Conditions: 150 mM KOAc, 10 mM MgCl2 and 150 mM bicine (pH 8.5), 24 C.
Structure probing data (2A3 and DMS) for a 177-nucleotide construct.
For 2A3 the reverse transcriptase was SuperScript II with manganese.
RNA sequence: GGGAACGACUCGAGUAGAGUCGAAAACACCCCGCGUUCGCGCGGGGUGAAACAGGUAGUUGCUAUCUCAAUUACCUGAACAGGCCAUGGUCUGGAUAGCAUAAACUGAUGACUUCGGUCAUCAGAAGAUACGAAUUUGGUUCGCCAAAUUCGUAUCAAAAGAAACAACAACAACAAC
Reactivity to 2A3 in 0.01 (KOAc 150mM, MgCl2 10mM, bicine 150mM(pH8.5), 24C), signal-to-noise 1, nucleotides 027 to 126: c000a010c000c000c010c010g000c010g020u020u060c260g000c000g000c020g060g040g000g010u000g000a030a010a010c000a000g000g010u010a020g010u020u040g040c090u160a130u240c060u010c130a000a090u020u000a000c000c000u020g000a040a030c020a020g020g000c000c030a110u300g080g000u030c030u020g020g070a120u090a050g020c040a080u140a130a150a070c010u000g010a010u000g000a000c030u020u040c250g110g000u010c000a000u000c010a000g000a020a030
Reactivity to DMS in 0.01 (KOAc 150mM, MgCl2 10mM, bicine 150mM(pH8.5), 24C), signal-to-noise 3, nucleotides 027 to 126: c010a010c000c000c000c000g030c000g010u000u000c210g020c020g110c010g000g000g000g010u000g000a010a060a110c010a010g000g010u000a020g010u000u000g030c190u000a080u000c200u000c010a030a020u000u000a010c000c000u000g000a090a130c040a040g010g010c030c030a100u000g060g010u000c050u010g010g010a100u000a070g020c150a110u010a060a090a150c000u000g010a020u000g000a010c000u000u010c200g010g010u000c000a000u000c000a000g010a050a070